Chemical mapping of a 177-nucleotide RNA with 2A3 and DMS.
DMS adducts were read by reverse transcription with MarathonRT.
For 2A3 the reverse transcriptase was SuperScript II with manganese.
RNA sequence: GGGAACGACUCGAGUAGAGUCGAAAACCUGGUCUCGGGUCGGGGCUGCUCCCGCUUACUGCCCCCUGCCCAGGCUGGUGUGCACCCCCUCUGGCUGCUUUCAAGGCCUCUUCUCUCUUCUCGGCAGUAAAUCAUUGCCAUUCGUGGCAAUGAUUUAAAAAGAAACAACAACAACAAC
Reactivity to 2A3 in 0.01 (KOAc 150mM, MgCl2 10mM, bicine 150mM(pH8.5), 24C), signal-to-noise 5, nucleotides 027 to 126: c010c000u000g000g030u020c030u020c130g010g000g030u060c050g010g010g010g020c020u040g020c020u100c040c040c000g040c080u080u140a080c040u060g020c000c000c000c000c000u040g020c020c000c000a010g000g000c010u020g020g030u110g020u070g060c040a100c000c010c000c000c010u040c010u020g050g000c020u020g000c000u060u090u090c080a090a080g040g010c010c010u020c000u020u010c010u000c000u010c000u050u040c020u010c000g040g000c000a030g030
Reactivity to DMS in 0.01 (KOAc 150mM, MgCl2 10mM, bicine 150mM(pH8.5), 24C), signal-to-noise 3, nucleotides 027 to 126: c010c000u000g020g000u000c000u000c090g000g010g020u010c300g000g000g000g000c100u010g000c100u010c020c020c010g010c100u010u030a160c090u010g000c050c000c000c000c050u010g000c040c000c000a050g020g010c010u000g000g020u010g020u020g030c100a160c040c000c020c030c010u010c020u020g010g030c030u010g010c060u020u010u010c090a080a120g000g000c030c010u000c010u000u010c010u010c010u000c030u000u000c020u000c030g000g000c070a070g000
The RNA was probed in 150 mM KOAc, 10 mM MgCl2 and 150 mM bicine (pH 8.5) at 24 C.